[RMDB]
RNA sequence: GGGAACGACUCGAGUAGAGUCGAAAAAGGGCUGGAUUCGUCCAGCCCUGCACAUUCGUACGCAACGAAGCCUACGUCAUUACGCAAAUGACGUAAAGCGUAGAACCACGGACUUCGGUCCGUGGAAGUUUAUCCUUCACUUCGGUGAAGGAUAAACAAAAGAAACAACAACAACAAC
Reactivity to 2A3 in 0.01 (KOAc 150mM, MgCl2 10mM, bicine 150mM(pH8.5), 24C), signal-to-noise 3, nucleotides 027 to 126: a000g010g010g000c020u010g010g000a020u050u060c130g040u010c060c010a000g000c010c000c000u010g000c000a020c000a090u070u080c020g070u090a030c060g030c100a110a060c090g090a060a030g050c010c010u010a020c010g000u000c010a020u020u080a090c100g010c200a110a030a020u040g020a010c000g000u020a020a030a030g000c020g020u040a030g040a080a030c010c000a000c000g000g000a000c000u030u050c210g060g000u000c010c000g000u010g010g000a010a000
Reactivity to DMS in 0.01 (KOAc 150mM, MgCl2 10mM, bicine 150mM(pH8.5), 24C), signal-to-noise 4, nucleotides 027 to 126: a000g010g010g010c000u000g000g000a040u000u020c210g040u010c010c000a000g000c010c000c000u000g010c120a110c220a230u000u000c020g000u000a060c070g000c060a110a080c080g000a060a120g000c080c050u000a040c000g000u000c000a010u000u000a090c300g010c300a090a020a020u000g000a020c000g010u010a010a010a210g010c020g020u000a070g000a120a170c000c000a000c000g010g010a010c010u000u010c150g020g000u000c000c010g020u000g000g000a010a030